[RMDB]
RNA sequence: GGGAACGACUCGAGUAGAGUCGAAAACAGCUACGUUUCGACGUAGCUGAAAAUAAAACAGGCAAGUACCAGGCUGAAAAAGGUACAAAGAUCGAAAGAUCAAAACGGUUCGAUUCGUCGAACCGAAUACAUAUACGUACUUCGGUACGUAUAUGUAAAAAGAAACAACAACAACAAC
Reactivity to 2A3 in 0.01 (KOAc 150mM, MgCl2 10mM, bicine 150mM(pH8.5), 24C), signal-to-noise 5, nucleotides 027 to 126: c000a000g000c000u010a000c000g010u000u040u150c200g090a020c000g000u000a000g000c000u000g000a000a000a000a000u100a000a050a010a020c060a010g070g000c030a080a040g000u000a010c000c010a030g080g000c020u070g080a080a010a010a030a040g020g000u010a010c040a020a100a010g010a000u020c010g030a080a030a020g010a000u010c030a000a040a010a020c010g000g010u000u000c000g010a020u020u060c200g040u010c000g090a000a000c000c000g000a010a000
Reactivity to DMS in 0.01 (KOAc 150mM, MgCl2 10mM, bicine 150mM(pH8.5), 24C), signal-to-noise 7, nucleotides 027 to 126: c010a020g000c000u000a000c000g020u000u000u010c170g040a030c010g020u000a000g010c000u010g000a010a030a050a070u010a120a060a100a140c160a170g000g000c020a040a040g020u000a020c010c000a080g010g020c020u000g000a030a050a020a050a080g010g010u000a010c030a110a090a110g000a010u000c000g000a120a080a150g000a010u000c000a070a080a080a160c020g000g010u000u000c010g010a020u010u010c190g010u010c000g010a000a010c000c000g000a030a040